[RMDB]
RNA sequence: GGGAACGACUCGAGUAGAGUCGAAAAUGAACAUUCCAGGCUCUGUGAACUAAGUGACUGAAGCUGAUUGACACAGGUCAAGGGGACUUCAAGGAAGAAAGCCAGCCUUAGACUGACAUCAGAGAACCAAACUCCGGUGUCUAAGCUCAAGUAAUAAUAUUUAGGUAUCAUUCGUGAUACCUAAAUAAAAAGAAACAACAACAACAAC
Reactivity to DMS in 0.01 (KOAc 150mM, MgCl2 10mM, bicine 150mM(pH8.5), 24C), signal-to-noise 3, nucleotides 027 to 156: u000g010a090a110c070a170u020u000c010c000a150g030g000c020u000c040u020g000u000g010a080a110c050u000a080a140g030u010g010a130c040u010g020a090a140g030c020u010g010a220u000u010g000a130c020a100c090a110g020g000u000c050a040a070g020g020g010g010a100c030u000u000c040a050a130g020g000a110a090g010a080a030a050g010c000c000a050g010c010c010u000u010a110g020a040c040u010g020a030c000a070u010c020a100g000a060g020a120a200c120c160a070a090a160c020u000c020c000g020g040u000g030u000c000u010a070a070g000c000u000c020a010a090g010u000a040a070u000a050a140
Reactivity to 2A3 in 0.01 (KOAc 150mM, MgCl2 10mM, bicine 150mM(pH8.5), 24C), signal-to-noise 3, nucleotides 027 to 156: u140g030a030a020c020a070u060u020c040c010a020g010g010c010u040c020u060g050u030g060a070a030c040u050a120a060g030u030g150a070c030u050g040a070a010g020c030u060g040a090u050u100g030a020c020a010c020a060g000g080u000c010a020a020g020g010g020g020a030c010u050u020c060a040a040g090g010a030a090g060a040a070a000g020c000c000a020g020c020c010u000u020a030g000a020c040u020g010a000c000a010u020c010a000g000a000g010a080a060c080c020a150a040a060c010u010c010c040g000g010u000g000u000c000u030a060a010g000c000u010c060a060a050g020u060a040a130u120a170a020
Description: The record gives the reactivity of an RNA of 207 nucleotides to DMS and 2A3. DMS adducts were read by reverse transcription with MarathonRT. The RNA was probed in 150 mM KOAc, 10 mM MgCl2 and 150 mM bicine (pH 8.5) at 24 C. The 2A3 profile rests on 2,136 reads.